[RMDB]
RNA sequence: GGGAACGACUCGAGUAGAGUCGAAAAACACAACUCUUUCGAGAGUUGUGUAAAAAAACCUUUGUGUGGGUUAGCAUCGAUCUAUGUGGACCCAUUGGGUCCCAUAGGGAGCUAUCCACACUCUGGUAAAAAAACCGUCGUGUUCGCACGACGGUAAGACUUUAGGAUGUUUCGACAUCCUAAAGUCAAAAGAAACAACAACAACAAC
Reactivity to 2A3 in 0.01 (KOAc 150mM, MgCl2 10mM, bicine 150mM(pH8.5), 24C), signal-to-noise 1, nucleotides 027 to 156: a000c000a010c000a000a000c000u040c000u060u100u190c300g090a030g000a010g030u000u000g000u000g000u010a000a000a000a000a000a000a000c030c000u020u000u000g020u020g000u000g060g050g000u180u220a000g010c010a090u300c010g100a070u020c040u010a010u030g090u300g020g010a000c000c000c100a300u120u240g030g010g000u020c000c000c000a000u000a000g010g000g000a000g000c000u000a000u020c000c000a000c000a010c000u000c000u000g030g010u090a130a170a000a000a000a000a000c000c000g010u010c000g000u020g110u110u150c300g050c070a000c000g000a000c000g000g000u000a000a010
This 207-nucleotide RNA was probed chemically with 2A3. Values are in units of 0.01, from 0 to 300, in steps of 10.